[RMDB]
RNA sequence: GGGAACGACUCGAGUAGAGUCGAAAAACGACACAAUUCGUUGUGUCGUAAUGGAAAAGGCUAGGACCGGCCAGACAAAGGUCCGAAUAGAUCGAAAGAUCACACGCCACGAAUUCGUUCGUGGCAAUGAAAGAGAUGCGUUCGCGCAUCUCUUUCAAAAAGAAACAACAACAACAAC
Reactivity to 2A3 in 0.01 (KOAc 150mM, MgCl2 10mM, bicine 150mM(pH8.5), 24C), signal-to-noise 1, nucleotides 027 to 126: a010c010g000a010c050a000c000a000a060u200u150c260g090u130u000g000u010g010u000c000g010u020a050a050u130g030g010a010a050a000a250g010g000c000u060a070g070g010a010c020c000g020g020c030c040a060g000a040c140a040a080a000g030g000u000c000c000g000a030a060u190a040g000a020u010c000g010a060a000a030g000a000u050c010a010c010a020c090g000c000c000a010c000g000a000a000u090u060c290g050u020u040c000g000u020g000g000c000a000a000
Reactivity to DMS in 0.01 (KOAc 150mM, MgCl2 10mM, bicine 150mM(pH8.5), 24C), signal-to-noise 1, nucleotides 027 to 126: a010c000g000a010c010a050c000a060a010u000u060c180g030u000u000g040u000g010u000c000g020u000a040a080u050g020g000a060a150a200a130g000g000c000u030a190g030g000a010c000c000g000g010c000c000a210g040a130c220a070a000a120g000g010u000c000c000g030a000a070u010a150g000a000u000c000g000a130a070a000g000a040u000c000a130c300a060c150g000c000c000a010c000g000a030a000u000u000c180g020u000u000c000g000u000g010g000c000a000a010